Structure probing data (DMS and 2A3) for a 177-nucleotide construct.
The RNA was probed in 150 mM KOAc, 10 mM MgCl2 and 150 mM bicine (pH 8.5) at 24 C.
For DMS the reverse transcriptase was MarathonRT.
2A3 adducts were read by reverse transcription with SuperScript II with manganese.
The data come from the RNA Mapping Database (RMDB), libraries RFM100 and RFMREP.
[RMDB]
RNA sequence: GGGAACGACUCGAGUAGAGUCGAAAACGCCCGUCAAAGCACCCGAGUGGGGUCCGGAUGAGGCCGUCAUGCGACGGUCGAAUCUGGGCUCUGCAAGGGGGCUUAAGUCGGAACCCUUGUAGCCUUAACCUUAAUAUAUCUUCGGAUAUAUUAAGGUAAAAGAAACAACAACAACAAC
Reactivity to DMS in 0.01 (KOAc 150mM, MgCl2 10mM, bicine 150mM(pH8.5), 24C), signal-to-noise 4, nucleotides 027 to 126: c300g010c240c000c000g020u020c050a120a040a010g000c000a030c010c000c020g020a300g000u000g000g010g010g000u000c000c000g030g000a010u000g020a300g010g010c010c000g010u000c010a110u060g020c260g000a030c000g000g000u000c010g010a120a020u000c010u000g000g010g000c000u000c000u000g000c000a030a260g010g010g000g000g020c000u000u000a020a070g000u010c010g000g010a130a190c010c000c010u010u000g010u010a060g000c100c020u020u020a190
Reactivity to 2A3 in 0.01 (KOAc 150mM, MgCl2 10mM, bicine 150mM(pH8.5), 24C), signal-to-noise 5, nucleotides 027 to 126: c080g060c030c000c000g020u040c040a080a040a000g000c000a020c000c010c000g000a000g000u010g000g000g000g000u000c000c010g000g000a000u010g010a030g000g010c020c000g000u010c040a130u300g200c210g050a000c000g000g000u000c010g000a000a010u000c000u000g000g000g010c000u000c000u000g000c010a010a020g000g000g000g000g010c000u000u020a040a020g030u020c010g000g060a110a100c010c000c000u030u130g100u090a040g050c010c010u050u060a030